Notes:
The record gives the reactivity of an RNA of 177 nucleotides to DMS and 2A3. DMS (dimethyl sulfate) methylates the pairing face of unpaired adenines and cytosines. DMS adducts were read by reverse transcription with MarathonRT. Values are in units of 0.01, from 0 to 300, in steps of 10. It was measured as part of the RMDB library TTRDES. Values cover nucleotides 27 to 126.

RNA sequence: GGGAACGACUCGAGUAGAGUCGAAAAGAUAUGGAUCGAUACAGACAUGCUCGAACAUCGGAAACGAUGUGAGAGCAACAGCUGUGAUCGAUCCUAAGUCAAACGAACCCUGCUUCGGCAGGGUUCGGAUACAUAACAGGUUCGCCUGUUAUGUAUCAAAAGAAACAACAACAACAAC
Reactivity to DMS in 0.01 (KOAc 150mM, MgCl2 10mM, bicine 150mM(pH8.5), 24C), signal-to-noise 9, nucleotides 027 to 126: g000a030u000a210u010g000g000a010u000c000g020a010u000a020c010a010g010a050c130a250u010g020c000u000c000g000a300a010c000a000u000c000g010g000a050a040a120c000g010a000u000g010u000g000a300g000a010g020c000a010a020c260a140g010c000u000g000u000g000a010u000c000g000a000u000c000c000u000a000a070g000u000c020a080a100a300c020g000a000a000c000c000c000u000g010c000u000u020c260g020g010c000a010g000g000g010u000u000c010g000
Reactivity to 2A3 in 0.01 (KOAc 150mM, MgCl2 10mM, bicine 150mM(pH8.5), 24C), signal-to-noise 5, nucleotides 027 to 126: g000a000u040a010u090g000g000a000u000c000g010a000u020a020c010a010g110a020c120a220u300g020c000u010c000g000a020a000c000a000u000c000g000g010a030a020a010c010g000a000u010g000u010g000a030g010a000g030c000a010a000c010a000g000c000u010g010u090g100a040u000c000g000a000u000c000c000u000a000a000g020u000c020a070a070a110c030g000a000a010c010c010c010u000g000c010u040u120c300g150g000c000a000g020g000g000u010u000c000g000

The RNA was probed in 150 mM KOAc, 10 mM MgCl2 and 150 mM bicine (pH 8.5) at 24 C.